[RMDB]
RNA sequence: GGGAACGACUCGAGUAGAGUCGAAAAAUCUGCCGGUGGCACCAGCUGUCCCGUGUGCCGAUAGGGUGGGAGCCGUCGCCCUUGUGGGACCCUUGCUCUCAGCAGGAAUAGCCUGUGGAGGGUGGGCCACCGAUUGGGAUUUCGAUCCCAAUCGGUGAAAAGAAACAACAACAACAAC
Reactivity to DMS in 0.01 (KOAc 150mM, MgCl2 10mM, bicine 150mM(pH8.5), 24C), signal-to-noise 2, nucleotides 027 to 126: a080u020c050u010g000c040c040g040g030u000g000g020c030a080c040c060a080g010c080u010g010u000c020c010c000g000u010g020u000g030c040c050g000a140u010a050g010g000g000u000g030g010g010a100g030c050c090g000u010c050g020c030c010c030u000u010g000u010g000g000g020a140c070c040c030u000u010g010c020u010c020u020c040a160g000c010a010g050g020a300a140u010a180g030c010c010u000g020u000g020g010a060g010g010g030u000g010g000g000c070
Reactivity to 2A3 in 0.01 (KOAc 150mM, MgCl2 10mM, bicine 150mM(pH8.5), 24C), signal-to-noise 1, nucleotides 027 to 126: a010u020c020u100g020c030c030g010g050u070g010g070c050a070c060c030a030g000c060u100g010u060c000c040c020g030u100g000u020g060c040c000g000a160u140a030g090g050g040u070g040g000g000a070g150c050c010g030u060c000g010c000c000c000u050u090g090u150g030g020g020a100c020c000c000u020u200g000c000u000c000u000c000a010g000c000a020g090g050a190a300u110a160g300c010c010u050g000u050g110g040a020g000g020g020u050g000g010g020c000
Structure probing data (DMS and 2A3) for a 177-nucleotide construct. As a SHAPE reagent, 2A3 marks flexible, mostly unpaired nucleotides at the ribose 2'-OH. For DMS the reverse transcriptase was MarathonRT. It was measured as part of the RMDB library OK2TST.